[RMDB]
RNA sequence: GGGAACGACUCGAGUAGAGUCGAAAAUUGACUUCACAAAAGCAGCUGGAAAUGGACAACCACAAUAUGCAUAAAUCUAACUCCUACCAUCAGCUACACACUGCUUGACAUAUAUUGUUAGAAGCACGUUAGAAGAGAUCUUCGGAUCUCUUCUAACAAAAGAAACAACAACAACAAC
Reactivity to 2A3 in 0.01 (KOAc 150mM, MgCl2 10mM, bicine 150mM(pH8.5), 24C), signal-to-noise 2, nucleotides 027 to 126: u020u030g020a010c010u030u030c070a010c010a060a110a020a040g010c010a010g020c030u100g050g020a090a150a080u060g030g040a040c020a050a020c010c020a060c010a080a100u140a100u280g070c050a030u090a120a090a070u070c040u030a000a050c020u010c030c010u020a080c000c000a030u030c030a000g000c020u080a000c040a000c000a000c070u080g000c000u030u030g000a000c040a010u230a030u030a060u150u120g030u000u020a050g010a090a020g070c030a010c090
Reactivity to DMS in 0.01 (KOAc 150mM, MgCl2 10mM, bicine 150mM(pH8.5), 24C), signal-to-noise 2, nucleotides 027 to 126: u030u000g010a130c030u000u020c050a100c100a120a050a090a070g010c020a060g010c080u000g020g000a130a060a040u020g020g010a030c110a090a050c030c090a020c100a040a060u010a060u000g000c030a070u010a020a110a080u000c060u020a050a110c120u000c030c020u000a050c060c000a040u000c050a000g020c000u010a050c070a070c120a090c100u000g000c040u000u000g010a020c020a050u000a060u000a050u000u010g010u030u000a060g040a090a050g040c040a070c270